Source: RMDB library OK1LIB, as collected in RNAgym. Structure probing data (2A3) for a 177-nucleotide construct.
RNA sequence: GGGAACGACUCGAGUAGAGUCGAAAAGCGUAAUGCGGUCGCAGCGAGGCCGCGUCGACGAUGCGCAGCCCGGUGUGUUGCCCGGUGAUGUCGAUGAUGGCCUGCGUGGACGGUAGCAGUCCGCCAGCGUCCGACCCCCAUUCGUGGGGGUCGGACGAAAAGAAACAACAACAACAAC
Reactivity to 2A3 in 0.01 (KOAc 150mM, MgCl2 10mM, bicine 150mM(pH8.5), 24C), signal-to-noise 1, nucleotides 027 to 126: g000c010g160u150a040a030u160g160c010g030g000u100c070g050c060a060g070c010g060a000g060g050c060c160g050c000g000u000c000g000a000c040g100a120u170g070c190g000c000a050g010c070c000c160g020g010u260g020u190g000u000u210g140c130c140c100g080g000u170g060a060u170g060u050c000g000a000u070g070a120u000g000g000c000c020u030g000c000g000u000g010g050a070c000g000g080u050a020g030c090a000g060u020c000c000g000c000c000a000g010

Description
Conditions: 150 mM KOAc, 10 mM MgCl2 and 150 mM bicine (pH 8.5), 24 C.